[RMDB]
RNA sequence: GGGAACGACUCGAGUAGAGUCGAAAAGAUAUGGACUCUCUCACGGUCAAUGAUGCACGCUCGGAAACGAGCGUGUUGAGACCCAAGGUGAGAGGAGUCCUAAGUCAAACCGUCGUUCGCGACGGAACUCAUUGUGGUUCUUCGGAACCACAAUGAGAAAAGAAACAACAACAACAAC
Reactivity to DMS in 0.01 (KOAc 150mM, MgCl2 10mM, bicine 150mM(pH8.5), 24C), signal-to-noise 2, nucleotides 027 to 126: g020a100u000a300u020g010g000a000c000u000c010u030c000u000c000a010c000g000g010u000c050a130a190u000g000a100u000g000c010a000c020g040c000u000c000g000g000a090a210a160c000g020a000g000c000g030u000g000u000u000g010a120g010a040c000c040c300a080a070g020g000u020g000a040g000a070g010g020a000g000u000c000c000u000a000a060g020u000c030a120a100a160c000c000g000u000c000g010u010u010c280g020c020g010a020c000g000g020a070a060
Reactivity to 2A3 in 0.01 (KOAc 150mM, MgCl2 10mM, bicine 150mM(pH8.5), 24C), signal-to-noise 2, nucleotides 027 to 126: g030a000u030a100u140g020g010a000c000u000c000u000c000u000c040a000c050g010g020u050c110a150a300u120g040a000u070g050c000a000c000g000c040u020c020g000g010a080a110a100c010g030a000g000c000g060u000g020u000u000g000a010g000a000c010c050c090a170a100g300g000u010g020a000g010a050g050g040a010g000u030c000c020u010a140a000g030u000c030a120a100a000c000c010g000u000c010g000u020u150c300g000c010g120a000c000g000g010a050a030
About this RNA
An RNA of 177 nucleotides, treated with DMS and 2A3 and read out base by base. The RNA was probed in 150 mM KOAc, 10 mM MgCl2 and 150 mM bicine (pH 8.5) at 24 C. It was measured as part of the RMDB library TTRDES.